[RMDB]
RNA sequence: GGGAACGACUCGAGUAGAGUCGAAAAUUUCCCAGCCAGGGAUUGUCGUCCUCUAGUUUCUUGAUGGUCUUCCUUGCCUUCCGGAGCCUCCUCUCGAGAUCAUCCGCUUCGUCUCUUGCUUUGACCCACUUCGAGAGGAUUUCCUCCCUUCCCUUCCCUCCUAUACGUUCUUCGGAACGUAUAGGAGAAAAGAAACAACAACAACAAC
Reactivity to 2A3 in 0.01 (KOAc 150mM, MgCl2 10mM, bicine 150mM(pH8.5), 24C), signal-to-noise 1, nucleotides 027 to 156: u020u030u010c000c000c000a000g050c010c020a020g000g040g070a040u100u140g090u120c000g010u020c020c040u000c080u060a090g000u080u020u000c030u090u140g050a080u140g050g000u030c000u020u050c050c000u080u060g000c010c000u070u100c100c030g030g000a040g050c000c040u000c020c010u010c000u000c000g040a070g030a170u050c050a040u020c030c040g000c040u050u060c040g120u020c030u010c000u100u100g050c040u110u020u120g060a040c000c000c060a060c060u130u070c020g020a010g010a010g000g000a050u010u080u060c000c010u020c000c010c010u010u010c000c010c000u020u030c020c000

Description
Structure probing data (2A3) for a 207-nucleotide construct. It was measured as part of the RMDB library VIROID. Conditions: 150 mM KOAc, 10 mM MgCl2 and 150 mM bicine (pH 8.5), 24 C. For 2A3, 1,134 sequencing reads were counted.